This 207-nucleotide RNA was probed chemically with DMS and 2A3. The reactions ran in a buffer of 150 mM KOAc, 10 mM MgCl2 and 150 mM bicine (pH 8.5), at 24 C.
RNA sequence: GGGAACGACUCGAGUAGAGUCGAAAAGUAUCCCUAGAUGAUAAAACACCGCACAUGGCUCGUAAGAGCGGUUAAAUUAGCAAGGAAUGCAAAUUACGCGAGGUAACGCAUGGCCUAGGCUCGUUAGAAAAGGGAGAAUCCUUCGGGAUUCUCCCAAGUUGUAUGUGGAGUUCGCUCCACAUACAACAAAAGAAACAACAACAACAAC
Reactivity to DMS in 0.01 (KOAc 150mM, MgCl2 10mM, bicine 150mM(pH8.5), 24C), signal-to-noise 1, nucleotides 027 to 156: g040u020a100u010c020c000c000u010a080g020a140u000g000a110u000a040a090a160a070c060a140c000c010g000c040a060c020a090u080g050g000c010u000c020g000u000a180a230g010a050g030c010g000g020u000u010a050a050a110u020u000a100g020c020a150a050g000g030a080a050u000g040c050a040a090a140u020u000a000c050g020c090g020a210g000g000u020a050a030c100g020c040a070u030g020g020c020c010u010a100g030g010c000u020c050g010u000u000a040g000a050a050a110a240g020g000g000a000g010a020a010u000c000c030u000u000c300g060g040g000a010u000u000c000u000c000c000c000a000a000
Reactivity to 2A3 in 0.01 (KOAc 150mM, MgCl2 10mM, bicine 150mM(pH8.5), 24C), signal-to-noise 2, nucleotides 027 to 156: g070u020a060u080c010c010c010u030a070g060a100u130g010a040u070a090a090a020a030c080a030c000c010g070c020a060c020a140u100g070g000c040u010c130g070u090a140a000g030a030g070c000g000g010u020u040a030a050a120u050u040a020g000c030a010a000g040g010a020a040u080g030c030a050a050a120u240u050a050c050g010c050g080a080g090g060u050a010a020c020g000c000a010u010g090g060c000c010u000a000g000g100c000u000c010g120u040u000a040g130a030a140a030a060g010g000g000a020g000a000a010u010c000c000u000u130c140g010g000g000a000u000u000c000u010c010c000c000a000a000

For DMS, 1,795 sequencing reads were counted. Source: RMDB library M2RFPK, as collected in RNAgym.